Source: RMDB library OK3TST, as collected in RNAgym. Structure probing data (2A3 and DMS) for a 207-nucleotide construct. 2A3 adducts were read by reverse transcription with SuperScript II with manganese. For DMS, 4,390 sequencing reads were counted. The RNA was probed in 150 mM KOAc, 10 mM MgCl2 and 150 mM bicine (pH 8.5) at 24 C. Values are in units of 0.01, from 0 to 300, in steps of 10.
RNA sequence: GGGAACGACUCGAGUAGAGUCGAAAAGUGUCUUGGCCAAGAUCACACUUUGGUGAGUAGGUAAUCACCGUAGGCAAUCAUUGUAGGCACUGAUGGCCGGAGAGAGGUUGGGGACCCCACCUCUGCCCUCAGCUCAACCACCUUGCUGGGAAGACCACACGACUGGUAUAUUCGUAUACCAGUCGUGAAAAGAAACAACAACAACAAC
Reactivity to 2A3 in 0.01 (KOAc 150mM, MgCl2 10mM, bicine 150mM(pH8.5), 24C), signal-to-noise 3, nucleotides 027 to 156: g110u080g000u010c020u020u050g060g000c050c010a070a050g030a150u120c060a030c010a020c090u070u090u120g020g020u040g010a070g010u170a140g040g170u180a140a110u060c010a020c020c010g010u030a080g010g060c030a040a070u100c050a050u090u150g070u110a050g010g050c030a020c080u040g030a130u070g060g000c010c010g040g000a040g000a000g010a010g050g000u140u100g030g010g030g110a140c040c000c000c010a020c000c000u020c020u030g010c010c000c010u010c000a010g000c010u040c060a090a070c030c030a040c020c000u060u080g000c020u000g000g020g020a010a060g020a040c000c040a010
Reactivity to DMS in 0.01 (KOAc 150mM, MgCl2 10mM, bicine 150mM(pH8.5), 24C), signal-to-noise 2, nucleotides 027 to 156: g000u000g010u000c030u010u020g010g050c080c030a100a130g020a090u010c030a050c070a070c050u000u010u000g010g080u010g000a050g030u000a110g050g020u000a120a140u000c020a050c020c020g040u000a140g010g000c060a070a060u000c060a110u000u000g000u000a080g000g010c030a100c070u010g010a050u000g000g010c030c010g040g000a150g010a140g020a060g020g000u010u000g020g020g010g000a300c080c060c020c010a040c050c000u020c010u000g000c000c020c000u000c010a070g000c020u010c050a070a150c000c020a090c060c050u000u000g010c060u000g020g010g010a140a090g000a170c010c070a210